[RMDB]
An RNA of 177 nucleotides, treated with 2A3 and DMS and read out base by base. For 2A3, 4,761 sequencing reads were counted. The RNA was probed in 150 mM KOAc, 10 mM MgCl2 and 150 mM bicine (pH 8.5) at 24 C.
RNA sequence: GGGAACGACUCGAGUAGAGUCGAAAAAACGGCUCGGGAGUGGCUGCGGUUCUGGAAACGGCAGUGCAGCUGGGGAACUCACCGCAUGUGUCCAACGCGGUACGGUUCGCCUUCUGGGGCGCCGAGGGCUACACUUAGGUUUCGACCUAAGUGUAGCAAAAGAAACAACAACAACAAC
Reactivity to 2A3 in 0.01 (KOAc 150mM, MgCl2 10mM, bicine 150mM(pH8.5), 24C), signal-to-noise 5, nucleotides 027 to 126: a000a000c040g050g000c010u000c010g050g000g000a090g040u090g040g000c020u040g000c030g080g030u130u070c030u040g070g040a170a110a040c030g070g010c010a020g050u050g080c010a000g000c010u040g020g000g050g000a020a010c020u030c080a020c030c000g040c040a070u160g100u050g070u120c060c020a060a030c060g010c000g050g000u050a050c060g010g000u030u030c030g150c040c000u060u040c070u070g020g000g030g000c030g010c010c000g010a080g010g090
Reactivity to DMS in 0.01 (KOAc 150mM, MgCl2 10mM, bicine 150mM(pH8.5), 24C), signal-to-noise 3, nucleotides 027 to 126: a080a120c030g020g000c000u010c020g010g030g000a060g000u030g040g000c030u000g010c030g000g030u010u010c020u000g040g000a110a070a110c070g010g020c020a040g000u020g020c040a030g000c020u010g010g000g000g020a010a030c040u010c140a040c000c000g010c010a080u010g000u010g000u050c190c120a110a090c120g030c010g020g000u010a080c290g010g000u000u010c010g000c050c000u000u000c080u000g000g000g030g010c060g000c000c000g000a100g000g010